Record summary
This 177-nucleotide RNA was probed chemically with DMS and 2A3. DMS adducts were read by reverse transcription with MarathonRT. The data come from the RNA Mapping Database (RMDB), library VIROID. The 2A3 profile rests on 2,870 reads. Values cover nucleotides 27 to 126.
RNA sequence: GGGAACGACUCGAGUAGAGUCGAAAAGAUGGGCCUCAGUGCCGACGAGGAGUCCGCAGGUGGGAGGAUCAGCCACCGGAGAGGGACGCGAUGGUAAGAGUGGAGGAAAGUUCGGAGGGAAAUCCCACAUACACAAUGGGUUCGCCCAUUGUGUAUGAAAAGAAACAACAACAACAAC
Reactivity to DMS in 0.01 (KOAc 150mM, MgCl2 10mM, bicine 150mM(pH8.5), 24C), signal-to-noise 4, nucleotides 027 to 126: g010a100u000g020g010g010c020c030u010c070a130g040u010g010c020c030g010a060c100g010a100g000g010a160g000u000c020c060g000c060a120g020g020u000g010g020g020a080g010g000a090u010c090a090g000c030c020a040c030c010g000g020a100g010a140g010g000g010a040c080g010c070g000a040u010g010g000u010a060a090g020a070g010u000g010g000a110g000g000a060a050a060g020u000u000c070g010g010a100g000g000g000a060a060a100u000c010c000c010a230
Reactivity to 2A3 in 0.01 (KOAc 150mM, MgCl2 10mM, bicine 150mM(pH8.5), 24C), signal-to-noise 2, nucleotides 027 to 126: g070a070u120g030g040g000c020c040u080c050a030g040u050g150c020c030g020a020c030g000a020g090g030a040g040u020c040c010g030c050a020g000g050u060g040g020g000a100g050g020a120u070c030a000g040c000c000a030c010c000g010g020a090g030a030g010g010g000a020c050g040c030g050a070u060g050g000u020a050a030g070a030g060u110g010g010a060g000g030a070a030a030g040u090u050c030g000g030a050g000g030g000a000a040a020u010c020c010c000a030